[RMDB]
RNA sequence: GGGAACGACUCGAGUAGAGUCGAAAAACGCGAGCUACGGCUCGCGAUGUCCAAGUUUGAUCUAACAAAUUACCGACGUGUGCAAAAACUGUUACAUCGGUAACUUGUUAGGUCAAACUUGGACAAAUGUAUAACCUAAGUUCGCUUAGGUUAUACAAAAAGAAACAACAACAACAAC
Reactivity to 2A3 in 0.01 (KOAc 150mM, MgCl2 10mM, bicine 150mM(pH8.5), 24C), signal-to-noise 9, nucleotides 027 to 126: a000c010g000c010g000a000g000c010u060a040c240g110g000c000u010c000g010c000g000a040u040g000u000c000c000a000a000g000u000u000u000g000a000u010c000u000a000a000c000a010a010a010u000u000a000c000c000g020a030c090g140u110g020u050g040c020a040a070a080a170a210c090u050g020u100u130a010c010a010u010c000g000g000u000a000a000c000u000u000g000u000u000a000g000g000u000c000a000a000a000c000u000u000g000g000a000c000a000a000a000
Reactivity to DMS in 0.01 (KOAc 150mM, MgCl2 10mM, bicine 150mM(pH8.5), 24C), signal-to-noise 6, nucleotides 027 to 126: a120c020g010c000g010a010g020c020u010a080c220g030g020c010u000c000g020c000g000a010u000g010u000c000c010a010a000g000u000u000u000g000a000u000c000u000a010a000c000a000a000a030u010u000a000c000c000g020a010c110g030u000g010u010g010c030a030a100a130a120a180c210u010g010u000u010a020c010a090u000c000g000g000u000a000a000c060u000u000g010u010u000a000g000g000u000c000a000a000a000c000u000u000g000g000a010c000a000a020a040